[RMDB]
RNA sequence: GGGAACGACUCGAGUAGAGUCGAAAAUUGCCGCUAUAAUUUAAUAUAAAUUAAUUAUACCGUGUGUGGCGGCGGAAGCCACCGACUAUACACACACGGAAAAUAUAGUUGGCGGCACGUCCGGUUCGCCGGGCGAAAAGAAACAACAACAACAAC
Reactivity to 2A3 in 0.01 (KOAc 150mM, MgCl2 10mM, bicine 150mM(pH8.5), 24C), signal-to-noise 1, nucleotides 027 to 135: u090u020g000c000c000g000c000u020a020u010a160a020u040u090u070a130a020u130a030u070a210a030a030u020u020a030a030u030u010a040u040a080c010c000g000u000g000u000g000u000g010g000c010g000g000c010g010g000a090a000g080c000c000a010c000c000g020a010c000u010a010u120a010c000a000c010a000c000a000c000g000g000a020a000a030a000u010a000u010a000g040u020u030g000g010c000g000g000c000a000c010g000u000c000c000g000g000u010u000c100g020c010c000g000g000g000c000g000a010
Reactivity to DMS in 0.01 (KOAc 150mM, MgCl2 10mM, bicine 150mM(pH8.5), 24C), signal-to-noise 4, nucleotides 027 to 135: u020u010g010c000c000g010c000u000a070u010a040a020u000u000u000a060a160u070a220u040a030a020a080u000u010a040a060u000u000a050u000a110c000c000g000u000g010u000g010u000g010g010c130g010g000c020g000g020a130a140g010c140c090a070c030c040g000a080c070u000a090u030a160c060a010c000a000c000a000c000g000g000a020a010a050a090u010a030u000a040g010u010u000g000g010c000g000g000c000a020c030g010u000c000c000g000g010u010u030c160g020c010c000g010g000g010c000g000a040
Source information:
Structure probing data (2A3 and DMS) for a 155-nucleotide construct. The reactions ran in a buffer of 150 mM KOAc, 10 mM MgCl2 and 150 mM bicine (pH 8.5), at 24 C.